Source: RMDB library M2RFOK, as collected in RNAgym. Structure probing data (2A3) for a 207-nucleotide construct. Reactivities are given for positions 27 through 156. For 2A3 the reverse transcriptase was SuperScript II with manganese.
RNA sequence: GGGAACGACUCGAGUAGAGUCGAAAAACUGCCAUACGUGGCAGAAACACGCCUUACCAGGACUAAACAGCGUGUCUAAAAAACAGUGCUUCAUACCUGAUCUGGAGGGUAGAUCAGGAAUACUAAAAAAAUCGGGUGAAGUUCGCUUCACCCGAAACGUAUGACAACGGUUCGCCGUUGUCAUACGAAAAGAAACAACAACAACAAC
Reactivity to 2A3 in 0.01 (KOAc 150mM, MgCl2 10mM, bicine 150mM(pH8.5), 24C), signal-to-noise 1, nucleotides 027 to 156: a000c000u000g000c000c000a040u060a110c150g100u000g000g000c000a000g010a000a010a010c040a000c000g010c030c000u050u090a030c050c050a090g110g060a070c050u110a020a120a070c070a010g000c020g000u010g010u090c120u050a010a000a020a010a030a010c080a080g010u100g070c040u060u130c010a060u060a150c000c000u000g000a000u000c010u050g090g030a090g080g080g060u090a020g010a010u000c020a000g030g010a020a000u060a040c070u210a000a010a050a020a000a020a140u030c000g000g000g000u000g010a000a000g030u020u100c200g020c060u010u000c000a000c000c000c000g000a000a000a000